The data come from the RNA Mapping Database (RMDB), library OK3TST. The record gives the reactivity of an RNA of 207 nucleotides to DMS and 2A3. For DMS, 5,435 sequencing reads were counted.
RNA sequence: GGGAACGACUCGAGUAGAGUCGAAAAGGCGUUUAAAUUCUGCGGUUUUGACAUUCGACAUAAAAAAUAGCCACUUCGUUGUGGUCCGUAAGGACGGUGUCGGUACAAAUUCGUCACGAAUUAUUGAUGAUAUGUUCACAAGAGGCAACCUCAUGGCAACCAAAGAGGGAUUCGUCCCUCUUUGGUUAAAAGAAACAACAACAACAAC
Reactivity to DMS in 0.01 (KOAc 150mM, MgCl2 10mM, bicine 150mM(pH8.5), 24C), signal-to-noise 3, nucleotides 027 to 156: g010g020c030g030u010u000u000a100a050a090u000u000c040u010g020c040g000g000u000u000u000u020g010a100c030a160u010u000c020g010a080c040a100u060a000a060a100a090a110a170u000a120g020c000c010a050c030u000u000c270g020u000u000g000u000g000g000u000c020c020g030u000a120a170g020g010a020c000g020g040u010g000u000c020g050g050u000a170c060a040a040a190u000u000c020g070u010c060a060c140g020a050a050u000u000a090u000u010g000a050u010g010a050u000a040u000g020u000u000c000a090c050a050a110g020a120g020g020c020a060a100c050c010u000c040a070u000g000g000c110
Reactivity to 2A3 in 0.01 (KOAc 150mM, MgCl2 10mM, bicine 150mM(pH8.5), 24C), signal-to-noise 4, nucleotides 027 to 156: g050g000c050g020u050u090u170a110a100a060u050u030c010u030g020c020g010g020u030u030u050u050g050a050c050a060u100u060c080g030a000c020a020u180a060a130a050a000a020a020u110a040g030c000c000a010c020u060u090c100g200u190u140g010u010g030g000u010c000c000g040u040a110a080g110g030a030c000g000g020u010g020u030c000g010g000u030a040c030a010a060a020u090u040c020g090u100c120a030c200g050a050a010u120u080a080u090u140g060a040u010g020a020u040a020u190g070u080u090c050a010c010a110a070g040a040g110g000c010a040a050c000c000u040c070a050u100g040g000c020